[RMDB]
RNA sequence: GGGAACGACUCGAGUAGAGUCGAAAAGCUCUGGAAUUGAGGCCCCUCUAACAAUAAUCCAAAACUACUUCGCAGAGUAAUCUGCCGAAUCGUAGGAUGCCCAUUACUUUCUAUUUUUGGAGCAUCUAAAACUGUCAGUGCUUCGGCACUGACAGAAUCACGUUUGUAAGUUCGCUUACAAACGUGAAAAAGAAACAACAACAACAAC
Reactivity to DMS in 0.01 (KOAc 150mM, MgCl2 10mM, bicine 150mM(pH8.5), 24C), signal-to-noise 1, nucleotides 027 to 156: g000c030u010c030u030g050g040a100a140u000u000g000a110g000g000c050c020c040c060u020c010u000a120a140c050a090a080u000a080a090u050c080c080a040a060a150a140c000u000a050c040u000u000c040g030c010a010g010a030g010u010a120a180u000c050u010g020c020c040g000a060a040u000c080g100u000a120g000g000a050u000g010c000c000c020a070u000u000a080c100u000u000u000c110u020a160u000u010u000u010u010g010g020a020g040c020a030u010c020u000a040a090a060a040c000u000g000u000c010a010g000u000g050c010u000u000c260g050g060c040a010c000u000g000a000c000a010g000a020a070
Reactivity to 2A3 in 0.01 (KOAc 150mM, MgCl2 10mM, bicine 150mM(pH8.5), 24C), signal-to-noise 2, nucleotides 027 to 156: g030c000u000c000u030g040g080a160a120u210u030g030a020g010g030c030c010c010c000u100c090u110a120a080c050a080a110u140a030a090u070c040c010a040a010a010a080c010u010a020c000u000u020c020g000c010a000g000a000g030u130a120a140u000c000u000g020c070c040g010a020a020u100c060g000u010a010g020g020a000u000g000c000c000c000a040u020u030a080c050u070u230u140c110u230a240u140u060u010u010u040g020g000a140g010c000a000u040c010u080a030a030a030a190c000u000g000u000c000a000g000u000g010c000u020u060c090g050g000c000a000c000u010g000a000c000a000g000a000a020
Overview: The record gives the reactivity of an RNA of 207 nucleotides to DMS and 2A3. The RNA was probed in 150 mM KOAc, 10 mM MgCl2 and 150 mM bicine (pH 8.5) at 24 C. As a SHAPE reagent, 2A3 marks flexible, mostly unpaired nucleotides at the ribose 2'-OH. The 2A3 profile rests on 1,137 reads.